[RMDB]
RNA sequence: GGGAACGACUCGAGUAGAGUCGAAAAGAUUGCAUUGAAUUAAGGGUGCAUCCAAGCAUGAUUAAAAACGAAUGCAUGCUCUCUAAAGUGGAUGGGGUGAUGAACGCUAUCAGCGUUAUAGGGGAUAGCCUUCGUAAGUUUUCGAACUUACGAAGGCAAAAGAAACAACAACAACAAC
Reactivity to 2A3 in 0.01 (KOAc 150mM, MgCl2 10mM, bicine 150mM(pH8.5), 24C), signal-to-noise 2, nucleotides 027 to 126: g040a040u180u140g000c100a050u010u130g120a120a100u100u220a060a030g010g000g010u080g000c000a010u000c040c030a020a000g000c000a030u000g030a060u080u250a050a190a160a040a010c080g120a140a020u100g000c000a000u020g000c030u000c010u020c010u120a210a100a040g090u060g060g030a060u040g010g010g000g000u050g030a060u140g010a020a000c020g000c010u040a090u300c080a090g000c000g000u020u030a040u050a050g010g010g000g000a040u070a060
Reactivity to DMS in 0.01 (KOAc 150mM, MgCl2 10mM, bicine 150mM(pH8.5), 24C), signal-to-noise 2, nucleotides 027 to 126: g020a140u010u000g040c100a110u000u000g020a150a140u010u000a080a130g040g000g020u010g020c020a070u000c070c090a110a100g000c000a000u000g010a100u010u000a040a040a050a110a140c300g000a030a030u000g020c010a010u000g010c030u000c150u000c120u000a040a080a110g010u010g000g000a070u020g030g000g000g020u000g000a080u010g000a020a030c030g000c000u000a100u000c210a080g020c000g020u000u010a040u020a100g000g010g010g000a100u020a100